This 177-nucleotide RNA was probed chemically with DMS and 2A3. The RNA was probed in 150 mM KOAc, 10 mM MgCl2 and 150 mM bicine (pH 8.5) at 24 C. For DMS, 1,585 sequencing reads were counted. The data come from the RNA Mapping Database (RMDB), library 15KREP. DMS adducts were read by reverse transcription with MarathonRT.
RNA sequence: GGGAACGACUCGAGUAGAGUCGAAAAGUUACGUGACUGUGAUGCUGUAGCUCCCCAUGAUUUCUUCAUCUUUGAUGUAGACAAAGUUAAAACACCUCAUAUUGUACGUCAGCGUUUAACUGAGUACCAAUUCCGAAGGGUUCGCCCUUCGGAAUUGAAAAGAAACAACAACAACAAC
Reactivity to DMS in 0.01 (KOAc 150mM, MgCl2 10mM, bicine 150mM(pH8.5), 24C), signal-to-noise 2, nucleotides 027 to 126: g000u000u010a040c060g030u000g010a060c030u000g020u010g010a080u030g020c060u020g020u000a050g010c040u000c040c000c010c040a170u000g000a090u000u000u000c020u000u000c040a040u000c020u000u000u000g010a040u000g010u000a040g000a060c290a040a090a080g000u000u000a040a060a080a050c100a080c040c040u000c080a100u010a110u000u000g020u000a040c020g030u000c010a030g000c010g020u000u000u010a070a060c030u000g000a120g000u000a040c040
Reactivity to 2A3 in 0.01 (KOAc 150mM, MgCl2 10mM, bicine 150mM(pH8.5), 24C), signal-to-noise 2, nucleotides 027 to 126: g030u020u020a010c060g050u060g140a060c030u120g050u090g260a060u110g020c020u050g010u030a020g010c010u100c010c010c010c030a100u120g060a150u110u090u060c000u040u080c000a020u000c060u030u030u260g010a000u020g020u040a010g000a010c060a020a120a020g020u010u070a030a140a070a040c030a020c000c040u020c030a020u070a070u130u150g000u000a010c000g130u010c020a030g000c010g080u030u130u000a080a050c010u000g000a000g020u000a010c000